[RMDB]
RNA sequence: GGGAACGACUCGAGUAGAGUCGAAAAAGUAUCUAAUUCGUUAGAUACUCGGGGACGCGUGAGGCGGCCGUGUGCGCAGACAGUGCUCCAGCCGCGCGCGCGAAUUUCGCCUAUUCGUAGGCGAAAACAGGAAUGGUUUUUUCGAAAACCAUUCCUGAAAAGAAACAACAACAACAAC
Reactivity to DMS in 0.01 (KOAc 150mM, MgCl2 10mM, bicine 150mM(pH8.5), 24C), signal-to-noise 3, nucleotides 027 to 126: a010g000u000a010u000c000u000a000a030u000u010c180g010u000u000a000g000a010u000a000c000u000c040g000g000g000g000a290c010g010c010g020u000g010a080g030g010c000g010g020c000c020g010u010g010u000g010c020g020c000a160g010a120c300a150g000u000g000c010u000c010c010a060g020c010c000g020c000g010c010g020c000g020c010g020a050a080u000u000u000c000g020c000c000u000a020u010u020c200g010u000a010g010g010c000g000a000a000a040a150
Reactivity to 2A3 in 0.01 (KOAc 150mM, MgCl2 10mM, bicine 150mM(pH8.5), 24C), signal-to-noise 2, nucleotides 027 to 126: a000g000u010a000u030c010u000a030a000u060u110c180g020u050u000a010g000a010u000a000c000u010c010g010g020g000g020a010c000g000c000g020u020g010a140g300g000c020g000g000c010c020g040u200g000u000g030c050g000c050a030g170a300c070a130g100u010g020c000u000c000c020a000g000c000c000g000c030g030c000g000c000g000c000g020a010a010u010u000u010c000g000c000c000u000a020u000u050c270g040u020a000g000g000c000g000a010a000a000a050
This 177-nucleotide RNA was probed chemically with DMS and 2A3. For 2A3, 2,580 sequencing reads were counted. For 2A3 the reverse transcriptase was SuperScript II with manganese.